This 207-nucleotide RNA was probed chemically with 2A3 and DMS. For DMS the reverse transcriptase was MarathonRT. Values cover nucleotides 27 to 156. The RNA was probed in 150 mM KOAc, 10 mM MgCl2 and 150 mM bicine (pH 8.5) at 24 C. The 2A3 profile rests on 1,348 reads. Reactivities are rounded to 0.1 and cut off at 0 and 3. Source: RMDB library M2RFOK, as collected in RNAgym. For 2A3 the reverse transcriptase was SuperScript II with manganese.
[RMDB]
RNA sequence: GGGAACGACUCGAGUAGAGUCGAAAAUCAGAAUCAGGCCGGAGUGUUUAGCGCUCCGUAAACACGGUCGUACAUCCAGCCGGUAGCCUGGUUCCUUGCAUUUAGUGAUGUACGGAGUUUAUAGAGCAAAAGAAAGACCUGUUCGCAGGUCUUUCAAUCAUACCUAGAUGUUCGCAUCUAGGUAUGAAAAAGAAACAACAACAACAAC
Reactivity to 2A3 in 0.01 (KOAc 150mM, MgCl2 10mM, bicine 150mM(pH8.5), 24C), signal-to-noise 2, nucleotides 027 to 156: u120c020a010g020a010a000u010c000a000g000g010c000c000g020g010a010g020u070g040u110u180u270a160g070c010g000c010u000c000c000g000u020a020a020a000c120a010c050g020g040u020c020g020u040a000c000a030u000c020c040a030g030c000c000g030g040u040a000g010c000c020u010g000g000u000u010c010c000u040u090g030c020a130u070u110u180a090g010u050g080a010u020g010u020a020c020g030g020a060g030u120u230u050a150u130a090g120a000g030c050a050a030a070a080g000a000a000a000g000a000c010c000u010g020u040u100c270g000c130a000g020g010u000c000u000u000u010c000a000a000
Reactivity to DMS in 0.01 (KOAc 150mM, MgCl2 10mM, bicine 150mM(pH8.5), 24C), signal-to-noise 2, nucleotides 027 to 156: u010c030a070g000a070a000u010c010a010g030g030c010c050g030g010a110g080u000g030u010u000u000a150g020c080g010c020u000c000c010g020u010a020a020a070c060a130c090g020g040u010c030g030u010a060c010a030u010c020c050a230g030c030c090g030g010u000a090g000c060c010u000g010g070u000u000c010c010u020u010g010c090a130u000u000u000a090g000u010g000a020u000g020u010a040c030g000g000a190g020u000u010u000a060u010a110g010a140g030c060a100a070a090a140g000a020a020a030g000a020c010c000u000g010u000u000c300g000c030a020g020g010u000c000u010u000u000c000a040a110